[RMDB]
RNA sequence: GGGAACGACUCGAGUAGAGUCGAAAAAAAGAUAUGGACGCUAGGGAGCAGGCUGUACGAAGAACGUUCAUCGGAAACGAUGAACGGGAGUACAGUGGCCUGCGAAGAACUAGCGUCCUAAGUCAAAGCUUAGUCAUAUGUUCGCAUAUGACUAAGCAAAAGAAACAACAACAACAAC
Reactivity to 2A3 in 0.01 (KOAc 150mM, MgCl2 10mM, bicine 150mM(pH8.5), 24C), signal-to-noise 3, nucleotides 027 to 126: a000a000a000g040a030u070a040u080g000g000a000c000g000c010u000a000g010g010g060a200g050c000a010g010g000c020u040g000u000a010c020g160a300a040g020a070a010c000g000u000u000c010a000u000c000g000g010a020a030a010c000g000a000u000g000a000a000c000g000g000g000a010g000u010a010c040a060g060u140g200g120c000c010u010g030c020g040a060a000g010a000a010c000u000a000g000c000g000u000c000c000u010a010a000g000u000c030a070a070a000
Reactivity to DMS in 0.01 (KOAc 150mM, MgCl2 10mM, bicine 150mM(pH8.5), 24C), signal-to-noise 4, nucleotides 027 to 126: a060a130a100g010a040u000a260u010g000g000a030c000g020c000u010a020g000g020g000a120g010c000a010g020g000c000u000g000u000a000c000g000a100a130g000a100a180c010g010u000u000c000a010u000c000g010g000a080a040a110c000g010a010u000g010a010a000c000g000g010g000a060g010u000a000c000a100g010u000g020g010c020c000u000g010c010g010a090a080g010a090a160c000u000a010g000c010g000u000c000c000u000a000a070g010u000c020a100a140a140

The record gives the reactivity of an RNA of 177 nucleotides to 2A3 and DMS. Conditions: 150 mM KOAc, 10 mM MgCl2 and 150 mM bicine (pH 8.5), 24 C. For DMS the reverse transcriptase was MarathonRT. The data come from the RNA Mapping Database (RMDB), library TTRDES.